[RMDB]
Description:
The data come from the RNA Mapping Database (RMDB), library 15KLIB. The record gives the reactivity of an RNA of 170 nucleotides to 2A3 and DMS. The reactions ran in a buffer of 150 mM KOAc, 10 mM MgCl2 and 150 mM bicine (pH 8.5), at 24 C. For DMS, 95,197 sequencing reads were counted.
RNA sequence: GGGAACGACUCGAGUAGAGUCGAAAACGCUCCCCUCGGAUCUCCGCCGGGUGGGUUCACAUCCCCAACCCGCGGGCCGGCUGUUCUUCUUUUCCUUUGCUCGUCUUCCCCGGUCAGCCUCCCGAGUGCAGUACAAACUUCGGUUUGUACAAAAGAAACAACAACAACAAC
Reactivity to 2A3 in 0.01 (KOAc 150mM, MgCl2 10mM, bicine 150mM(pH8.5), 24C), signal-to-noise 9, nucleotides 027 to 129: c060g040c050u040c000c000c000c000u020c010g040g020a090u050c080u020c060c010g100c050c040g020g000g000u050g000g010g010u150u170c160a110c030a150u180c020c000c000c000a080a210c010c000c000g000c010g000g000g010c010c010g020g000c050u040g040u090u030c020u050u010c000u030u060u020u030c010c000u060u050u120g030c020u030c040g050u020c030u030u030c010c000c000c010g010g000u040c000a010g010c000c010u030c000c000c000g030a040g050u100g040c040a020
Reactivity to DMS in 0.01 (KOAc 150mM, MgCl2 10mM, bicine 150mM(pH8.5), 24C), signal-to-noise 9, nucleotides 027 to 129: c170g030c100u000c020c000c000c080u000c030g030g020a130u040c090u010c000c010g030c100c110g010g000g010u030g000g000g000u020u040c220a130c230a110u060c160c010c020c040a070a060c000c020c000g020c000g040g020g000c030c040g040g010c090u000g020u010u010c060u000u000c020u000u000u000u000c030c040u030u030u040g030c060u000c030g050u030c020u000u010c000c030c000c050g000g000u010c060a110g000c030c040u000c020c000c030g000a090g000u020g000c110a130